This 207-nucleotide RNA was probed chemically with 2A3 and DMS. The RNA was probed in 150 mM KOAc, 10 mM MgCl2 and 150 mM bicine (pH 8.5) at 24 C. 2A3 adducts were read by reverse transcription with SuperScript II with manganese. It was measured as part of the RMDB library OK3TST. For DMS the reverse transcriptase was MarathonRT. For 2A3, 3,646 sequencing reads were counted. The DMS profile rests on 6,027 reads.

[RMDB]
RNA sequence: GGGAACGACUCGAGUAGAGUCGAAAAGUACCACACAAAAUGCGUGUGUUACACCUUGGUGCUGGCAGCCAUGAUGGCGUCGCACCUGGUACUAGUGUUUUGAGAAGAUGGUUGCCAGAUGAUGCAAUUUUAGUUGAUAAUGAUGUCAGAGAUUAUGGAUCCGGUAUAUAUUCGUAUAUACCGGAUCAAAAGAAACAACAACAACAAC
Reactivity to 2A3 in 0.01 (KOAc 150mM, MgCl2 10mM, bicine 150mM(pH8.5), 24C), signal-to-noise 5, nucleotides 027 to 156: g020u010a010c020c020a020c010a010c000a010a150a080a080u240g050c080g050u030g000u010g020u040u030a040c050a050c020c010u060u140g030g000u070g030c090u130g000g040c040a090g050c050c010a110u260g050a130u280g070g030c030g000u000c010g000c010a010c000c010u000g010g010u020a010c020u020a030g030u010g030u050u060u080u130g100a100g020a100a060g020a050u050g050g000u040u050g010c030c020a030g010a070u040g010a020u050g040c050a050a060u040u050u050u070a050g010u010u050g040a050u030a130a040u070g040a020u030g010u030c030a010g060a040g060a150u230u260a070u300g110
Reactivity to DMS in 0.01 (KOAc 150mM, MgCl2 10mM, bicine 150mM(pH8.5), 24C), signal-to-noise 3, nucleotides 027 to 156: g000u000a080c040c020a120c050a100c040a060a100a060a300u000g020c070g040u010g050u000g000u000u000a070c030a080c030c020u000u030g030g000u000g010c010u000g000g010c010a140g010c000c000a120u010g020a140u010g030g040c010g030u000c040g000c000a040c020c030u000g010g000u000a070c050u000a090g040u000g020u000u000u000u000g000a160g020a090a110g000a090u000g000g040u000u010g010c000c040a150g020a080u060g010a090u010g020c000a050a090u010u010u020u000a100g000u000u000g020a080u000a080a090u010g010a070u000g000u000c030a060g000a180g020a140u000u000a130u000g040